Conditions: 150 mM KOAc, 10 mM MgCl2 and 150 mM bicine (pH 8.5), 24 C. The record gives the reactivity of an RNA of 207 nucleotides to DMS and 2A3. Reactivities are rounded to 0.1 and cut off at 0 and 3. Source: RMDB library M2RFOK, as collected in RNAgym. For DMS the reverse transcriptase was MarathonRT. For DMS, 4,278 sequencing reads were counted.
RNA sequence: GGGAACGACUCGAGUAGAGUCGAAAAAACGUUGCAUGAUCGUAAAACAUGCCCGGCUUACCGUGAGCCGCCUUUGAAAGAAAGGUUUGCACGGACUCUGUUGCGUUACGCACGUACCUAACUUGUGAAAACGGCAUCUUGUUCGCAAGAUGCCGAACGAAGAAUAUCACUUCGGUGAUAUUCUUCGAAAAGAAACAACAACAACAAC
Reactivity to DMS in 0.01 (KOAc 150mM, MgCl2 10mM, bicine 150mM(pH8.5), 24C), signal-to-noise 2, nucleotides 027 to 156: a060a060c030g020u010u000g020c000a040u010g010a000u010c020g040u020a020a080a030a000c020a010u000g000c000c020c010g020g020c020u000u000a100c010c080g000u000g010a050g020c020c000g040c020c010u020u000u000g000a140a080a210g000a110a030a000g030g000u010u010u000g030c020a010c030g040g020a200c210u010c070u000g000u000u010g020c020g030u000u010a100c080g000c070a060c110g010u000a070c040c020u000a060a080c060u000u000g010u010g000a070a100a070a190c020g000g000c010a010u000c000u000u010g020u000u010c300g000c030a010a030g010a000u010g010c000c010g010a010a040
Reactivity to 2A3 in 0.01 (KOAc 150mM, MgCl2 10mM, bicine 150mM(pH8.5), 24C), signal-to-noise 6, nucleotides 027 to 156: a000a000c010g000u000u000g000c000a000u000g020a060u220c040g050u200a010a070a010a100c000a000u000g000c010c000c000g000g000c000u030u070a110c000c000g000u000g000a000g000c000c010g020c020c000u040u010u010g070a120a060a000g030a000a010a000g020g000u020u040u070g040c000a000c000g060g010a060c050u110c050u110g100u110u040g000c010g040u040u070a050c150g000c010a020c020g010u050a050c010c040u070a110a160c070u140u130g050u060g160a030a050a040a050c010g000g010c000a000u000c000u000u020g020u060u070c120g010c110a000a000g000a000u000g010c000c000g000a000a000